[RMDB]
Chemical mapping of a 177-nucleotide RNA with 2A3 and DMS. The 2A3 profile rests on 814 reads. Reactivities are given for positions 27 through 126. The reactions ran in a buffer of 150 mM KOAc, 10 mM MgCl2 and 150 mM bicine (pH 8.5), at 24 C. It was measured as part of the RMDB library OK2TST. The DMS profile rests on 610 reads.

RNA sequence: GGGAACGACUCGAGUAGAGUCGAAAAAGAGUAUGCUAGCGAUGAGUCAACUGUCUUUUAACAGCAAUAAGAAACGUAUCACUGACUGUAAAGAAAGAGUAUCUUCAAACCGCAAUCAUGAUCCGAAGUUUCCUACCUGUUUCGACAGGUAGGAAACAAAAGAAACAACAACAACAAC
Reactivity to 2A3 in 0.01 (KOAc 150mM, MgCl2 10mM, bicine 150mM(pH8.5), 24C), signal-to-noise 1, nucleotides 027 to 126: a000g080a000g000u070a050u080g000c040u080a050g020c030g060a090u060g060a030g010u030c000a030a040c070u060g010u030c020u060u130u010u040a030a030c030a000g000c040a000a060u080a130a110g120a060a050a010c100g070u110a090u120c040a020c080u040g160a100c040u000g010u060a060a060a060g000a040a090a000g030a020g020u030a080u000c050u110u000c010a060a090a080c040c030g050c010a000a090u110c010a020u030g070a050u000c040c030g090a050a010
Reactivity to DMS in 0.01 (KOAc 150mM, MgCl2 10mM, bicine 150mM(pH8.5), 24C), signal-to-noise 1, nucleotides 027 to 126: a110g020a090g000u000a040u010g030c040u000a130g010c030g010a150u000g000a050g000u040c070a040a050c060u000g020u000c110u020u000u000u010a020a080c110a040g030c000a040a060u010a040a040g000a090a060a060c220g010u010a030u000c070a050c180u000g000a030c110u000g050u000a040a010a080g000a030a040a000g000a060g040u020a090u010c020u000u000c030a020a070a100c210c100g000c010a040a040u000c040a080u010g000a170u000c030c000g020a100a140